RNA sequence: GGGAACGACUCGAGUAGAGUCGAAAAGGUCACCUCUUCGGAGGUGACCAAAAUACCGCCCGAACGGCUUCCUGACCGGGCGGAAAUACUAAAACAGGAGCAAAACCCGACUGUUCGCAGUCGGGAAGGUUAUCAUUAAGUUCGCUUAAUGAUAACCAAAAGAAACAACAACAACAAC
Reactivity to 2A3 in 0.01 (KOAc 150mM, MgCl2 10mM, bicine 150mM(pH8.5), 24C), signal-to-noise 4, nucleotides 027 to 126: g000g010u000c000a000c020c020u020c020u060u120c300g040g010a000g010g000u000g010a000c000c010a000a000a000a000u010a000c010c000g010c000c000c000g010a020a010c030g050g000c010u160u050c020c000u010g020a030c000c010g000g000g000c020g010g000a030a010a010u060a010c030u050a000a010a160a100c020a020g000g020a000g000c010a020a030a040a080c000c000c000g000a000c000u010g060u060u080c250g000c140a010g000u010c020g010g000g000a000a000
Reactivity to DMS in 0.01 (KOAc 150mM, MgCl2 10mM, bicine 150mM(pH8.5), 24C), signal-to-noise 3, nucleotides 027 to 126: g020g010u010c010a000c000c000u000c000u000u010c190g020g000a010g000g010u000g000a000c000c000a000a000a070a070u010a070c020c000g000c010c000c010g020a040a070c090g010g000c000u010u010c010c000u010g010a240c120c000g000g000g010c000g000g000a010a050a060u000a060c110u000a050a050a100a100c050a020g000g010a030g010c040a140a070a090a160c010c010c000g000a020c010u000g010u000u000c180g030c010a010g010u000c000g000g000g010a000a010